[RMDB]
RNA sequence: GGGAACGACUCGAGUAGAGUCGAAAACUGUGUAAGCUCCUAGCAUGGAAAGGCCAGGAUCUCAUGGGUCUUGUUCACCACGGUAUCUACAGCAGCUUAUAUAAUACCCUGGUACAUGAUAGACACUCAAUAUUAAAUGAGUGAUCAACCUGGAGGAGGAGGUAUUUUAGUUCGCUAAAAUACCUCCAAAAGAAACAACAACAACAAC
Reactivity to DMS in 0.01 (KOAc 150mM, MgCl2 10mM, bicine 150mM(pH8.5), 24C), signal-to-noise 1, nucleotides 027 to 156: c020u010g030u030g040u010a030a080g000c040u000c010c020u000a160g010c000a040u000g060g000a100a060a090g050g000c010c010a070g010g020a180u000c040u010c070a080u000g020g010g000u010c030u010u000g030u000u010c040a030c000c010a060c130g010g000u000a020u000c070u000a130c090a130g030c070a090g010c150u000u000a050u000a140u010a090a070u000a060c010c010c010u000g020g030u000a100c060a070u000g030a080u000a180g010a250c010a030c000u010c020a080a180u010a180u000u010a080a130a130u000g000a010g000u010g010a170u000c060a080a120c030c040u010g000g010a120g000g030a250
Reactivity to 2A3 in 0.01 (KOAc 150mM, MgCl2 10mM, bicine 150mM(pH8.5), 24C), signal-to-noise 3, nucleotides 027 to 156: c040u050g000u000g020u170a090a040g050c030u010c020c020u040a020g000c010a040u080g070g050a090a080a080g070g000c010c010a000g030g040a070u040c030u020c080a130u160g060g040g000u030c010u050u040g030u090u090c040a040c030c000a000c030g030g020u040a070u050c060u170a060c020a080g050c000a010g020c040u170u010a090u020a010u040a200a090u080a060c000c000c000u000g000g010u000a050c030a050u100g030a040u090a070g110a010c010a000c010u010c000a040a060u120a150u300u220a150a110a060u060g010a000g000u020g020a030u010c000a000a070c000c000u040g040g040a030g030g020a050
Source: RMDB library OK3TST, as collected in RNAgym.
The record gives the reactivity of an RNA of 207 nucleotides to DMS and 2A3.
For DMS, 2,218 sequencing reads were counted.
The RNA was probed in 150 mM KOAc, 10 mM MgCl2 and 150 mM bicine (pH 8.5) at 24 C.
Reactivities are given for positions 27 through 156.